Notes:
Structure probing data (2A3 and DMS) for a 177-nucleotide construct. For 2A3 the reverse transcriptase was SuperScript II with manganese. The DMS profile rests on 6,971 reads.
RNA sequence: GGGAACGACUCGAGUAGAGUCGAAAAGUCAGUCAACUAGCCCUGCGCUCCCGAGCUAGUGACUGACAGAAAAGAGCUGCUUGGUCAGAACAAAUCUGACCUCGGGAGCGCAGGAGAGCAGCUCAAACAUCAUUAGCAUCUUCGGAUGCUAAUGAUGAAAAGAAACAACAACAACAAC
Reactivity to 2A3 in 0.01 (KOAc 150mM, MgCl2 10mM, bicine 150mM(pH8.5), 24C), signal-to-noise 4, nucleotides 027 to 126: g010u010c010a010g000u010c000a050a070c140u020a040g010c010c010c030u030g020c000g000c010u030c010c020c050g060a030g010c020u050a010g020u000g040a010c000u010g000a000c010a000g050a000a080a010a010g030a000g020c010u020g000c020u140u160g010g000u000c000a000g020a120a040c100a070a090a120u040c010u010g000a010c000c000u000c000g010g000g000a010g000c010g020c010a000g000g030a020g000a000g000c000a000g010c000u020c020a030a060a020
Reactivity to DMS in 0.01 (KOAc 150mM, MgCl2 10mM, bicine 150mM(pH8.5), 24C), signal-to-noise 3, nucleotides 027 to 126: g000u000c000a010g010u000c000a080a090c030u010a020g010c030c060c000u000g000c010g000c030u010c020c000c020g010a090g020c040u000a010g020u000g000a000c000u000g000a000c010a070g000a070a100a100a130g000a010g020c020u000g000c020u010u030g020g010u000c000a000g010a040a230c250a050a190a140u010c010u000g000a010c000c000u010c120g000g000g000a020g020c010g000c000a030g010g000a100g010a050g010c000a010g000c020u020c020a150a110a210
Reactivities are rounded to 0.1 and cut off at 0 and 3.